[RMDB]
RNA sequence: GGGAACGACUCGAGUAGAGUCGAAAAUUAGUUUGAGUUUUAAUAACCUUUUAGGGUUUGAUUCUAGUAAACCAGUCACUAAGAAAUACACUUACUCCUUCUUGCCUAAAGAAGACGGCGAUGUGUUAGACUGUUCUCUUCGGAGAACAGAAAAGAAACAACAACAACAAC
Reactivity to 2A3 in 0.01 (KOAc 150mM, MgCl2 10mM, bicine 150mM(pH8.5), 24C), signal-to-noise 5, nucleotides 027 to 129: u080u040a010g130u060u060u140g070a050g040u040u040u050u030a090a090u160a000a010c000c000u070u200u040u300a230g050g020g000u000u000u070g020a020u070u010c080u050a050g030u140a080a030a030c030c000a030g070u100c000a010c030u000a050a010g020a050a090a020u120a010c020a000c040u060u160a140c000u070c000c000u020u030c010u020u030g160c010c050u190a130a100a010g060a010a020g020a010c030g040g010c030g020a020u060g020u000g020u020u040a040g060a060
Reactivity to DMS in 0.01 (KOAc 150mM, MgCl2 10mM, bicine 150mM(pH8.5), 24C), signal-to-noise 8, nucleotides 027 to 129: u040u020a100g030u040u020u010g030a240g020u010u000u010u040a000a000u020a020a020c000c000u010u010u020u020a120g000g000g010u000u020u010g010a110u000u010c020u030a060g000u040a050a100a110c090c030a090g000u000c070a120c100u040a070a070g020a020a030a040u000a040c010a020c020u020u030a140c000u020c080c020u010u010c030u000u000g020c120c080u070a090a040a090g030a050a010g010a060c260g010g010c100g040a080u000g040u030g000u000u000a090g030a150
Record summary: The record gives the reactivity of an RNA of 170 nucleotides to 2A3 and DMS. The DMS profile rests on 29,669 reads. The RNA was probed in 150 mM KOAc, 10 mM MgCl2 and 150 mM bicine (pH 8.5) at 24 C.